[RMDB]
RNA sequence: GGGAACGACUCGAGUAGAGUCGAAAACCUCAAAGCUACGCGCUAAUGAUAAUAUCUUAUCAGUUAGAUUCACUGCUAACAAAAUUGUUGGUGGUGCUCCUACAUGGUUUAAUGCGUUGCGUGACUUCAGACGCACAGUUCGCUGUGCGUAAAAGAAACAACAACAACAAC
Reactivity to DMS in 0.01 (KOAc 150mM, MgCl2 10mM, bicine 150mM(pH8.5), 24C), signal-to-noise 4, nucleotides 027 to 129: c000c000u000c130a120a050a130g000c060u000a000c030g020c050g020c000u030a020a030u060g030a000u020a050a050u080a300u030c130u050u020a000u000c040a120g000u030u020a030g040a080u050u020c050a000c040u020g000c000u000a000a000c040a040a130a150a160u070u030g040u040u000g000g000u040g030g040u020g000c280u040c010c010u000a050c070a060u000g000g000u000u000u000a070a040u030g040c060g000u000u000g010c050g030u050g010a060c080u040u030c070a100g000
Reactivity to 2A3 in 0.01 (KOAc 150mM, MgCl2 10mM, bicine 150mM(pH8.5), 24C), signal-to-noise 9, nucleotides 027 to 129: c000c000u050c020a110a110a010g010c020u080a020c020g020c000g010c030u090a090a000u100g090a010u030a110a050u080a100u130c180u130u050a020u040c020a050g050u040u060a010g000a080u070u080c000a000c010u000g010c000u000a010a010c000a070a150a160a260u240u130g000u000u000g010g010u020g030g000u010g020c020u070c010c000u050a080c030a140u120g030g040u040u070u170a080a030u110g010c020g000u030u030g000c040g070u080g050a090c020u050u030c060a030g030